[RMDB]
RNA sequence: GGGAACGACUCGAGUAGAGUCGAAAAGAGACAGAAAGAGGGCGAGUGAUCUCGGAAGGAAUCCCCCAAGCUGCCAACAGAGGAAGAAACAAGACAGAGGAGCCCCCAUGACGCUGGUGAACCAUCGAAAUCCAUCGCUUCGGCGAUGGAAAAAGAAACAACAACAACAAC
Reactivity to DMS in 0.01 (KOAc 150mM, MgCl2 10mM, bicine 150mM(pH8.5), 24C), signal-to-noise 4, nucleotides 027 to 129: g010a070g040a060c120a010g040a040a120a070g050a040g000g020g030c110g020a100g060u110g030a040u000c030u000c100g000g080a040a040g070g000a090a090u020c020c060c000c000c050a150a110g020c150u060g000c040c060a110a060c160a160g030a040g030g000a010a020g040a080a070a040c060a050a030g060a050c160a080g040a040g030g040a030g060c090c050c000c000c060a100u090g010a050c160g020c110u040g000g070u100g010a050a040c050c050a040u010c110g000a000a000a000
Reactivity to 2A3 in 0.01 (KOAc 150mM, MgCl2 10mM, bicine 150mM(pH8.5), 24C), signal-to-noise 1, nucleotides 027 to 129: g020a000g000a000c000a000g070a000a010a000g030a010g000g020g050c070g050a010g030u110g020a040u000c000u000c040g000g020a000a000g000g030a030a010u070c000c000c000c000c000a030a000g000c080u110g040c000c020a040a050c020a060g030a000g070g000a000a000g000a000a000a010c000a000a010g050a000c020a000g030a000g000g010a030g020c000c000c000c000c000a000u050g050a010c000g010c070u030g000g000u060g100a000a000c030c000a040u130c000g010a030a040a000

This 170-nucleotide RNA was probed chemically with DMS and 2A3.
Reactivities are given for positions 27 through 129.
Source: RMDB library 15KLIB, as collected in RNAgym.
The reactions ran in a buffer of 150 mM KOAc, 10 mM MgCl2 and 150 mM bicine (pH 8.5), at 24 C.
For 2A3 the reverse transcriptase was SuperScript II with manganese.
For DMS, 5,250 sequencing reads were counted.